[RMDB]
RNA sequence: GGGAACGACUCGAGUAGAGUCGAAAAUCGAUGGCGUUCGCGCCAUCGAAGAGCCGUACCGCGUAGCACGCGGAUAGGAGUGAAGUUAUCCAAGGCCAUGGAGGAGGCGUGCUUUCGAGCACGCCAACCAGAGUUUAGUGUUCGCACUAAACUCUGGAAAAGAAACAACAACAACAAC
Reactivity to DMS in 0.01 (KOAc 150mM, MgCl2 10mM, bicine 150mM(pH8.5), 24C), signal-to-noise 4, nucleotides 027 to 126: u010c000g010a020u010g000g010c000g020u000u010c170g030c020g020c010c010a000u000c010g020a010a050g000a130g020c010c000g000u000a220c000c000g000c010g010u000a130g000c100a300c020g010c010g030g000a090u000a030g010g010a110g010u010g000a080a080g000u000u000a070u000c020c030a040a080g010g020c030c030a110u010g010g010a060g000g000a150g010g010c000g000u000g020c000u000u000u000c180g010a040g020c000a000c000g000c010c000a000a060
Reactivity to 2A3 in 0.01 (KOAc 150mM, MgCl2 10mM, bicine 150mM(pH8.5), 24C), signal-to-noise 4, nucleotides 027 to 126: u030c010g000a000u000g000g030c020g020u050u070c220g000c000g000c080c020a000u010c000g000a010a010g010a010g030c010c000g040u100a060c020c010g000c000g030u030a040g110c220a050c110g000c010g000g020a020u120a040g040g010a020g040u160g120a140a060g040u110u100a060u070c040c000a030a050g080g000c010c030a060u110g050g010a060g010g110a090g000g000c010g000u010g000c000u060u070u120c200g030a010g000c000a000c000g010c000c000a000a000